[RMDB]
RNA sequence: GGGAACGACUCGAGUAGAGUCGAAAACGCCCAGGCCGCGAUGACUCCCGUCGCGGCGAUGUGGAGCACGAUCUCGAAGGCUUGGCUCGGUUUGAUGGCGUUGAGAAUGAUGCCCAACAGGCCGAUAGUAUAUCCCCGACUUCGGUCGGGGAUAUACAAAAGAAACAACAACAACAAC
Reactivity to 2A3 in 0.01 (KOAc 150mM, MgCl2 10mM, bicine 150mM(pH8.5), 24C), signal-to-noise 2, nucleotides 027 to 126: c100g050c000c000c000a000g120g020c000c000g080c020g050a020u000g090a200c010u070c040c000c030g030u000c000g010c000g040g010c000g000a000u020g060u040g040g000a060g000c090a090c120g030a200u090c040u010c050g070a100a000g070g030c050u020u010g100g000c080u010c000g000g010u080u050u060g060a030u080g030g010c020g020u000u090g020a070g070a190a030u280g100a050u080g020c010c010c000a040a160c000a000g010g010c000c000g000a010u150a000
Reactivity to DMS in 0.01 (KOAc 150mM, MgCl2 10mM, bicine 150mM(pH8.5), 24C), signal-to-noise 1, nucleotides 027 to 126: c250g030c080c000c000a130g050g050c000c000g000c000g060a030u000g000a150c220u000c120c000c020g000u010c000g030c020g000g000c010g000a000u000g000u000g040g000a000g000c170a090c000g000a050u030c010u000c150g000a080a100g000g000c000u010u000g000g040c090u000c030g030g000u040u000u030g000a150u000g010g000c000g100u010u000g000a180g000a170a180u060g000a070u000g020c010c000c070a040a020c110a000g000g000c070c040g010a050u010a070